[RMDB]
RNA sequence: GGGAACGACUCGAGUAGAGUCGAAAAGCGCUGGUUAUCUAUGGUCCGACUCUUUGUCAAAAGUAUAGUAGCUGCCUUUGUGAUGGUCAGCUUAUAAAUAACAAUUUCUAGGAGGUUAAAAAGGCAGGGAUAAUAUUAUUUUCGAAUAAUAUUAUCCAAAAGAAACAACAACAACAAC
Reactivity to 2A3 in 0.01 (KOAc 150mM, MgCl2 10mM, bicine 150mM(pH8.5), 24C), signal-to-noise 3, nucleotides 027 to 126: g040c030g000c010u000g040g050u040u040a070u040c060u030a060u130g060g010u020c020c020g010a030c010u000c000u090u020u040g050u020c020a000a020a000a050g050u030a070u020a060g110u050a010g010c010u000g000c000c000u020u030u070g040u030g040a050u020g010g000u030c000a000g000c000u000u030a050u000a020a090a030u050a010a030c040a020a080u050u050u020c000u010a020g000g020a030g020g000u050u100a040a010a030a000a000g000g020c020a010g050
Reactivity to DMS in 0.01 (KOAc 150mM, MgCl2 10mM, bicine 150mM(pH8.5), 24C), signal-to-noise 4, nucleotides 027 to 126: g000c100g010c030u000g000g010u000u000a020u010c030u010a070u010g010g010u000c040c060g000a070c040u000c050u010u000u010g000u020c110a070a060a070a090g020u020a070u000a070g010u030a070g020c020u000g010c010c000u000u010u000g030u020g010a040u020g020g000u020c020a060g020c020u000u020a020u020a010a050a060u010a110a090c090a070a110u000u010u000c050u000a060g000g000a070g000g010u020u010a040a010a040a070a040g000g010c060a030g000
Record summary: Structure probing data (2A3 and DMS) for a 177-nucleotide construct. Reactivities are given for positions 27 through 126. Values are in units of 0.01, from 0 to 300, in steps of 10. Conditions: 150 mM KOAc, 10 mM MgCl2 and 150 mM bicine (pH 8.5), 24 C. The 2A3 profile rests on 4,460 reads.